Record summary:
Structure probing data (DMS and 2A3) for a 177-nucleotide construct. The 2A3 profile rests on 3,961 reads. The DMS profile rests on 1,077 reads. 2A3 adducts were read by reverse transcription with SuperScript II with manganese. The data come from the RNA Mapping Database (RMDB), libraries RFM100 and RFMREP.
RNA sequence: GGGAACGACUCGAGUAGAGUCGAAAAAUUGCCCCCAGUUUCCCCCAAAUUUGGGCAUUGUCCCUGGGUCUUCCAACGGACUGGGCGUUGCCCCCGGACACUGCGGACUGCCCCCGGGGUCUCGCUCUAUCUUUCAACUUUUCGAAGUUGAAAGAUAAAAAGAAACAACAACAACAAC
Reactivity to DMS in 0.01 (KOAc 150mM, MgCl2 10mM, bicine 150mM(pH8.5), 24C), signal-to-noise 2, nucleotides 027 to 126: a090u000u000g010c070c030c040c170c090a070g000u000u000u000c020c030c000c060c080a070a070a120u000u000u010g000g010g000c010a060u000u000g000u010c040c000c040u000g020g000g000u010c040u010u020c080c060a070a260c120g010g000a090c100u020g020g020g010c010g010u020u000g020c060c020c010c040c050g000g000a040c060a080c100u000g000c130g020g000a080c120u000g000c050c130c080c120c040g000g000g010g030u000c010u000c040g010c040u000c010
Reactivity to 2A3 in 0.01 (KOAc 150mM, MgCl2 10mM, bicine 150mM(pH8.5), 24C), signal-to-noise 4, nucleotides 027 to 126: a010u070u090g030c010c000c000c000c010a030g010u010u030u020c000c000c000c000c040a040a070a080u150u110u050g010g010g000c030a020u060u180g030u050c000c000c000u010g030g010g000u030c010u080u010c040c030a080a060c080g030g030a040c050u060g020g000g000c030g080u070u120g000c000c010c000c010c030g020g000a030c050a030c170u110g020c060g030g090a070c060u060g000c000c000c000c020c000g000g000g000g000u010c010u010c010g020c000u010c000